Structure probing data (DMS and 2A3) for a 177-nucleotide construct.
2A3 adducts were read by reverse transcription with SuperScript II with manganese.
The data come from the RNA Mapping Database (RMDB), library OK2TST.

[RMDB]
RNA sequence: GGGAACGACUCGAGUAGAGUCGAAAAGGAGUGCAGUGUUAUACGCCACAUAGUCAAAUAUCGUAUUCUAAUUUUUAUGCUAGUGGCUGUGUGCUUUCCUCUGCUUGCACUAUGUUUACAAUGGCCGAGUUUUUCGUUAAUUCGUUAACGAAAAACUAAAAGAAACAACAACAACAAC
Reactivity to DMS in 0.01 (KOAc 150mM, MgCl2 10mM, bicine 150mM(pH8.5), 24C), signal-to-noise 5, nucleotides 027 to 126: g020g020a060g020u000g010c010a040g020u010g000u010u010a090u000a090c300g000c130c010a020c000a040u000a010g010u010c050a030a100a110u010a030u000c090g020u000a050u010u010c180u050a060a120u000u000u010u000u000a040u020g000c080u000a030g010u000g010g000c000u000g020u000g010u000g010c070u000u010u000c050c040u000c080u000g000c030u000u000g000c010a010c030u000a050u010g000u000u000u010a070c130a060a110u000g010g020c050c090g010
Reactivity to 2A3 in 0.01 (KOAc 150mM, MgCl2 10mM, bicine 150mM(pH8.5), 24C), signal-to-noise 3, nucleotides 027 to 126: g120g010a030g000u000g000c010a020g020u010g070u250u170a160u030a100c070g040c020c000a010c000a040u040a010g030u040c010a000a060a150u060a020u070c050g020u030a060u150u000c050u080a100a300u060u090u060u130u110a050u070g000c000u000a010g040u010g000g000c020u010g000u000g000u000g000c000u050u060u020c010c010u050c030u040g000c000u040u060g020c000a000c030u030a060u110g080u020u140u030a050c050a070a090u060g080g000c000c030g000
In probing experiments dimethyl sulfate is read out at A N1 and C N3, which are open when not base-paired.